Structure probing data (2A3 and DMS) for a 177-nucleotide construct.
RNA sequence: GGGAACGACUCGAGUAGAGUCGAAAAGCGGACUUUUUCGAAAGUCCGCAUGGACUCAGAAGUGAAACGCCGUAGCGCCGAUGGAAGUGUGGGGUCUCCCCAGAUACCAACCCUUCGGGGUUGGUAAAACUCGUAACUAGUUCGCUAGUUACGAGUUAAAAGAAACAACAACAACAAC
Reactivity to 2A3 in 0.01 (KOAc 150mM, MgCl2 10mM, bicine 150mM(pH8.5), 24C), signal-to-noise 2, nucleotides 027 to 126: g000c010g000g010a010c000u060u020u030u000u170c230g120a030a000a000g000u000c000c010g000c000a010u040g020g010a010c010u020c040a030g040a220a040g130u120g100a090a100a020c030g030c020c010g070u080a040g060c010g000c080c010g040a060u080g030g070a060a090g060u070g030u070g120g020g000g010u010c030u050c020c010c000c000a020g040a090u050a010c000c000a000a000c000c000c000u010u050c120g050g010g000g000u000u000g000g000u010a010a000
Reactivity to DMS in 0.01 (KOAc 150mM, MgCl2 10mM, bicine 150mM(pH8.5), 24C), signal-to-noise 5, nucleotides 027 to 126: g010c000g000g000a020c000u000u010u000u010u010c150g010a030a020a020g010u000c010c000g010c010a000u000g010g010a070c010u000c000a100g010a140a110g020u010g030a090a080a090c100g020c020c060g010u000a100g010c070g010c030c030g000a100u010g000g000a090a060g010u000g020u000g010g000g010g010u000c030u000c050c000c000c130a110g010a220u000a010c000c000a000a000c000c000c000u000u010c210g020g000g000g010u000u000g000g010u000a000a020
For DMS, 5,931 sequencing reads were counted. The reactions ran in a buffer of 150 mM KOAc, 10 mM MgCl2 and 150 mM bicine (pH 8.5), at 24 C. DMS adducts were read by reverse transcription with MarathonRT. The 2A3 profile rests on 2,363 reads.